[RMDB]
RNA sequence: GGGAACGACUCGAGUAGAGUCGAAAACAUCAGUCGUUCGCGACUGAUGAAACGUGCAAGCGCUGCACGAAAAAGUCGAUCCAAUACCGAUCGACAAGCGCUAAAGAUAGGCCUUCGGGCCUAUCAACGUGACAGAUACGUUCGCGUAUCUGUCACGAAAAGAAACAACAACAACAAC
Reactivity to DMS in 0.01 (KOAc 150mM, MgCl2 10mM, bicine 150mM(pH8.5), 24C), signal-to-noise 2, nucleotides 027 to 126: c000a000u000c010a000g000u000c000g010u000u010c140g010c000g010a000c000u000g000a010u000g000a020a050a150c010g030u050g000c000a110a070g000c000g020c000u000g000c000a000c000g010a050a070a080a030a080g040u010c000g000a020u000c000c170a100a040u000a130c300c220g010a010u000c000g010a000c000a030a000g000c000g030c020u000a080a090a090g010a000u000a010g020g010c000c000u000u000c190g020g010g020c000c000u000a000u000c000a070a060
Reactivity to 2A3 in 0.01 (KOAc 150mM, MgCl2 10mM, bicine 150mM(pH8.5), 24C), signal-to-noise 2, nucleotides 027 to 126: c020a000u000c000a000g000u000c000g050u050u080c230g030c000g100a000c000u000g000a000u010g010a010a010a000c000g000u010g020c000a100a040g010c050g000c000u000g000c000a000c050g130a130a020a010a000a000g000u000c000g000a010u000c010c010a060a000u110a280c090c070g010a000u010c000g000a010c000a000a000g000c000g000c000u000a020a030a000g000a000u000a000g010g040c010c050u040u100c280g060g000g000c010c010u010a000u000c000a000a000

About this RNA
The data come from the RNA Mapping Database (RMDB), library M2PK50. An RNA of 177 nucleotides, treated with DMS and 2A3 and read out base by base. The DMS profile rests on 1,489 reads. Conditions: 150 mM KOAc, 10 mM MgCl2 and 150 mM bicine (pH 8.5), 24 C. Values cover nucleotides 27 to 126.